The record gives the reactivity of an RNA of 177 nucleotides to DMS and 2A3. For 2A3, 880 sequencing reads were counted. High 2A3 reactivity points to a flexible backbone, as in loops and unpaired stretches. DMS adducts were read by reverse transcription with MarathonRT.
RNA sequence: GGGAACGACUCGAGUAGAGUCGAAAACAGUUCAGGGACCAAACACCGGGACGGAACUGAUAGAUGUCAUGUGCCACGCAACGUUUACAUACAGGCAACUCACCCCAGGGCGGAUGGUCAACUACCAUCCGGACGAGGUGUUCGCACCUCGUCCGGAAAAAGAAACAACAACAACAAC
Reactivity to DMS in 0.01 (KOAc 150mM, MgCl2 10mM, bicine 150mM(pH8.5), 24C), signal-to-noise 2, nucleotides 027 to 126: c040a030g010u000u000c050a070g010g030g080a130c020c050a020a030a160c120a100c200c090g040g050g000a120c020g010g000a050a010c000u000g010a140u000a060g010a090u020g020u110c090a080u010g010u000g020c060c070a050c170g010c050a150a100c090g010u020u010u000a130c150a110u000a050c090a050g000g030c080a040a060c080u010c070a100c060c030c030c050a060g020g010g000c100g040g030a070u000g000g010u000c070a070a020c130u020a120c060c090a070
Reactivity to 2A3 in 0.01 (KOAc 150mM, MgCl2 10mM, bicine 150mM(pH8.5), 24C), signal-to-noise 1, nucleotides 027 to 126: c020a020g000u040u020c010a020g120g010g140a090c030c010a070a080a100c140a080c110c070g040g060g020a030c010g010g030a030a020c010u030g080a110u100a170g070a000u030g020u140c040a060u150g010u080g190c020c040a070c120g100c040a150a030c080g010u110u180u120a060c090a010u150a000c000a020g050g000c010a020a040c030u020c060a130c030c010c000c000a020g100g010g020c050g050g010a000u010g000g000u010c060a010a050c040u100a060c020c000a030